[RMDB]
RNA sequence: GGGAACGACUCGAGUAGAGUCGAAAAUCUUGAUCUCAAGAAAGUUGGUCUCUAAGUUCUCCAAAUAUGAACAUGCGUAUUCUCUUUUUCUCUACAAUUGGUGUCUACAUGGGAGAAUGUGGAUCACAUACGCAGGAAAAUUCGUUUUCCUGCGUAUAAAAGAAACAACAACAACAAC
Reactivity to 2A3 in 0.01 (KOAc 150mM, MgCl2 10mM, bicine 150mM(pH8.5), 24C), signal-to-noise 2, nucleotides 027 to 126: u030c000u040u040g070a080u050c060u000c120a040a060g100a100a090a040g100u080u030g020g000u000c000u000c010u080a140a080g040u040u010c010u000c030c020a100a090a140u240a060u100g020a060a020c040a060u080g040c040g020u080a050u100u030c050u000c050u060u110u050u110u050c090u100c030u070a020c040a090a120u020u090g080g010u070g080u020c020u060a080c030a070u040g090g030g000a070g040a030a040u040g020u060g010g000a020u040c010a010c000
Reactivity to DMS in 0.01 (KOAc 150mM, MgCl2 10mM, bicine 150mM(pH8.5), 24C), signal-to-noise 4, nucleotides 027 to 126: u010c040u000u000g020a170u020c150u010c050a080a060g000a090a090a110g030u010u010g000g000u000c010u000c100u010a060a150g010u000u000c000u000c010c050a070a090a090u010a070u000g000a110a080c070a020u000g000c080g000u000a050u000u000c040u010c020u000u000u010u000u010c040u010c030u010a050c160a050a100u000u010g010g030u000g000u000c040u000a050c050a050u000g010g010g010a060g010a050a030u010g000u000g000g010a040u000c040a040c120
Chemical mapping of a 177-nucleotide RNA with 2A3 and DMS.
The 2A3 profile rests on 1,586 reads.
For 2A3 the reverse transcriptase was SuperScript II with manganese.
Reactivities are given for positions 27 through 126.
It was measured as part of the RMDB library OK2TRN.